[RMDB]
The record gives the reactivity of an RNA of 177 nucleotides to 2A3 and DMS. For DMS the reverse transcriptase was MarathonRT. It was measured as part of the RMDB library OK2TRN. The 2A3 profile rests on 1,398 reads. For 2A3 the reverse transcriptase was SuperScript II with manganese.
RNA sequence: GGGAACGACUCGAGUAGAGUCGAAAAACUAGACUAUGCGAUAACCUAUAAGUAUGGUCUCUGAUAGACUAAGAAACCCAGGGGAUUGCACCAUUUUGGAGCUACGGGUCUAAAAAGAAAGCUUCCCCGUAUGAGCAGUAUUCGUACUGCUCAUACGAAAAGAAACAACAACAACAAC
Reactivity to 2A3 in 0.01 (KOAc 150mM, MgCl2 10mM, bicine 150mM(pH8.5), 24C), signal-to-noise 2, nucleotides 027 to 126: a000c010u020a000g020a000c000u010a000u040g090c020g040a080u040a190a090c020c030u130a100u010a300a010g080u050a070u090g010g000u020c010u010c000u050g010a060u070a110g050a050c040u120a300a050g040a100a170a020c040c040c060a030g030g000g000g030a040u080u230g000c040a030c030c000a070u110u100u100u080g050g020a100g070c020u040a090c250g030g040g010u030c000u070a070a050a020a020a050g080a050a060a010g020c000u020u000c000c030c010
Reactivity to DMS in 0.01 (KOAc 150mM, MgCl2 10mM, bicine 150mM(pH8.5), 24C), signal-to-noise 2, nucleotides 027 to 126: a060c050u000a030g000a040c000u000a010u000g010c070g010a190u010a090a080c100c050u010a120u000a100a140g030u010a050u000g000g010u000c070u000c060u010g010a070u000a010g000a070c020u000a050a100g010a060a140a070c030c030c030a070g020g000g010g010a060u010u030g030c050a070c160c060a120u000u000u000u000g010g030a030g000c020u020a100c170g020g000g000u010c000u000a020a020a020a050a050g010a070a110a090g000c080u000u000c000c020c020